[RMDB]
RNA sequence: GGGAACGACUCGAGUAGAGUCGAAAAGAUAUGGAUUCGUCUGGGAAGCGCCAGUGAAAUACCAUCGGAAACGAUGGGAGCUUACCCAGAGCGAAUCCUAAGUCAAACUGUCCCUUCGGGGACAGAACUAAACCUGUAUGUUCGCAUACAGGUUUAGAAAAGAAACAACAACAACAAC
Reactivity to 2A3 in 0.01 (KOAc 150mM, MgCl2 10mM, bicine 150mM(pH8.5), 24C), signal-to-noise 3, nucleotides 027 to 126: g030a010u100a060u170g000g000a000u010u010c000g000u000c030u000g000g000g010a020a010g010c050g070c190c140a160g200u220g300a120a110a050u220a080c010c020a010u000c010g030g000a090a030a010c020g010a000u000g000g020g020a030g000c020u050u150a300c000c000c000a010g020a010g010c010g000a000a000u020c000c000u000a060a000g010u000c020a050a050a120c010u010g000u000c020c000c000u000u030c300g030g000g000g000a010c010a000g010a020a010
Reactivity to DMS in 0.01 (KOAc 150mM, MgCl2 10mM, bicine 150mM(pH8.5), 24C), signal-to-noise 6, nucleotides 027 to 126: g000a050u000a300u000g000g010a010u000u000c000g030u010c000u000g000g000g000a080a020g010c010g000c300c190a140g010u000g010a070a110a120u000a180c050c000a000u000c000g020g000a130a100a170c000g020a010u000g000g010g000a040g000c010u000u000a140c000c000c000a010g000a050g020c010g000a000a000u000c010c000u000a010a070g010u010c050a090a110a170c010u000g000u000c000c000c000u000u010c180g030g000g010g000a010c000a000g000a060a230
Chemical mapping of a 177-nucleotide RNA with 2A3 and DMS. For DMS, 6,511 sequencing reads were counted. Reactivities are given for positions 27 through 126. 2A3 adducts were read by reverse transcription with SuperScript II with manganese. For 2A3, 5,946 sequencing reads were counted.